This 207-nucleotide RNA was probed chemically with 2A3 and DMS. Reactivities are given for positions 27 through 156. For DMS, 3,591 sequencing reads were counted. 2A3 adducts were read by reverse transcription with SuperScript II with manganese. For 2A3, 1,372 sequencing reads were counted. The RNA was probed in 150 mM KOAc, 10 mM MgCl2 and 150 mM bicine (pH 8.5) at 24 C. Reactivities are rounded to 0.1 and cut off at 0 and 3. DMS adducts were read by reverse transcription with MarathonRT.
RNA sequence: GGGAACGACUCGAGUAGAGUCGAAAAAGAGAUCCUUACCUAUGUAGAGCUUGCAUUCUAGUGGGGUGGGAGGUGAAGAAAGGGACCAAACAAAAUGAUGACAGCCUGGGCUGCGGUGGCUCACCCCUGUAAUCCCAGUGCUUUGGGAUGCCGAGGAUAAAUUUAUACCAUUCGUGGUAUAAAUUUAAAAAGAAACAACAACAACAAC
Reactivity to 2A3 in 0.01 (KOAc 150mM, MgCl2 10mM, bicine 150mM(pH8.5), 24C), signal-to-noise 2, nucleotides 027 to 156: a000g070a000g000a030u060c020c000u040u070a150c000c020u080a060u120g030u080a020g000a030g080c050u060u050g030c050a080u060u120c060u090a060g040u050g060g000g020g000u080g010g000g010a050g060g010u070g040a060a070g060a090a060a030g020g010g020a030c030c040a060a110a040c070a050a120a090a040u150g050a060u110g050a050c030a020g020c010c020u030g040g020g000c000u010g020c020g000g020u020g020g000c100u020c010a100c000c000c010c000u000g030u050a060a080u040c020c020c000a010g030u070g080c020u130u090u020g000g000g010a010u040g010c010c020g050a040g020g030a000
Reactivity to DMS in 0.01 (KOAc 150mM, MgCl2 10mM, bicine 150mM(pH8.5), 24C), signal-to-noise 1, nucleotides 027 to 156: a170g010a090g000a090u000c020c010u000u000a100c040c030u000a030u020g000u010a050g000a060g030c060u000u000g010c020a150u000u000c060u000a090g030u000g000g020g000g000u010g020g000g010a120g000g010u010g000a070a110g000a030a090a100g020g030g010a170c040c050a050a060a200c070a040a030a060a130u000g000a090u000g000a070c010a080g000c040c010u000g000g020g000c030u000g010c040g000g020u000g010g000c000u000c050a070c040c010c000c000u000g010u000a080a100u000c000c040c020a060g010u010g000c080u010u000u000g010g010g010a060u000g010c020c060g010a080g010g000a300